Background: This 207-nucleotide RNA was probed chemically with DMS and 2A3. 2A3 adducts were read by reverse transcription with SuperScript II with manganese. Conditions: 150 mM KOAc, 10 mM MgCl2 and 150 mM bicine (pH 8.5), 24 C. The data come from the RNA Mapping Database (RMDB), library M2RFPK. The DMS profile rests on 5,976 reads.
[RMDB]
RNA sequence: GGGAACGACUCGAGUAGAGUCGAAAAAGCAUGUUAGGUUCGCAUGGUGCACUAUUGUGUUAUUAGUAACUAAGUAAGCUUACAAUCGAAAAUGUUUGACCAUAAAAGGGUAAAAUGGUGUAAGACAGAUACCCUCUGAGCUUCGGCUCAGAGGGAACAAUUUGGUACAGUUCGCUGUACCAAAUUGAAAAGAAACAACAACAACAAC
Reactivity to DMS in 0.01 (KOAc 150mM, MgCl2 10mM, bicine 150mM(pH8.5), 24C), signal-to-noise 3, nucleotides 027 to 156: a100g010c020a070u000g000u000u000a080g020g020u000u010c060g020c050a080u000g020g020u000g000c090a070c040u000a070u000u010g020u000g010u010u010a090u000u000a140g020u000a030a100c030u000a070a160g000u000a090a120g020c030u010u000a050c040a060a140u000c060g010a050a040a060a080u000g010u000u000u000g000a080c040c010a050u010a040a090a130a130g000g000g020u010a040a070a040a010u000g000g010u000g000u000a010a110g010a090c060a090g000a190u010a110c000c000c000u000c000u000g000a020g000c010u010u000c300g060g020c000u010c000a000g010a010g010g000g000a010a000
Reactivity to 2A3 in 0.01 (KOAc 150mM, MgCl2 10mM, bicine 150mM(pH8.5), 24C), signal-to-noise 3, nucleotides 027 to 156: a000g040c030a010u050g000u060u070a070g010g030u020u050c030g000c060a030u040g050g030u050g040c030a010c020u110a170u150u130g030u020g010u020u050a030u040u030a050g050u040a040a030c050u010a070a050g120u010a060a010g050c020u070u030a040c060a070a100u060c040g070a070a000a050a000u060g040u040u080u080g050a010c020c000a000u050a120a160a010a010g070g020g030u090a040a080a000a010u030g000g010u020g040u050a050a010g010a020c040a020g060a040u140a150c010c000c000u000c000u000g010a000g000c000u010u150c240g060g000c000u000c000a000g000a000g000g000g000a000a000